Background: Source: RMDB library OK2TST, as collected in RNAgym. Chemical mapping of a 177-nucleotide RNA with DMS. The reactions ran in a buffer of 150 mM KOAc, 10 mM MgCl2 and 150 mM bicine (pH 8.5), at 24 C. For DMS the reverse transcriptase was MarathonRT.
RNA sequence: GGGAACGACUCGAGUAGAGUCGAAAAGGCUAACGAACAAUGUGGUGACGAUCAGACCAGGGACACAAGAUGAGCGGAACGCGAUGUUUUUUAUGUGUCUGGAUUUCGCGUUGGCGGCAUUGAACAACCUAGUCCGAGUCUUCGGACUCGGACUAGGAAAAGAAACAACAACAACAAC
Reactivity to DMS in 0.01 (KOAc 150mM, MgCl2 10mM, bicine 150mM(pH8.5), 24C), signal-to-noise 1, nucleotides 027 to 126: g040g020c070u010a140a070c170g010a030a090c040a010a060u010g080u010g000g020u000g000a010c030g000a070u010c080a130g010a070c050c030a030g000g000g010a070c020a040c090a070a080g000a040u010g000a140g020c010g020g010a080a180c160g000c020g000a070u000g010u010u000u020u000u000u000a020u030g010u000g020u020c130u000g010g000a110u000u020u040c040g040c000g000u000u000g010g010c060g000g060c030a040u000u010g000a140a160c130a040a200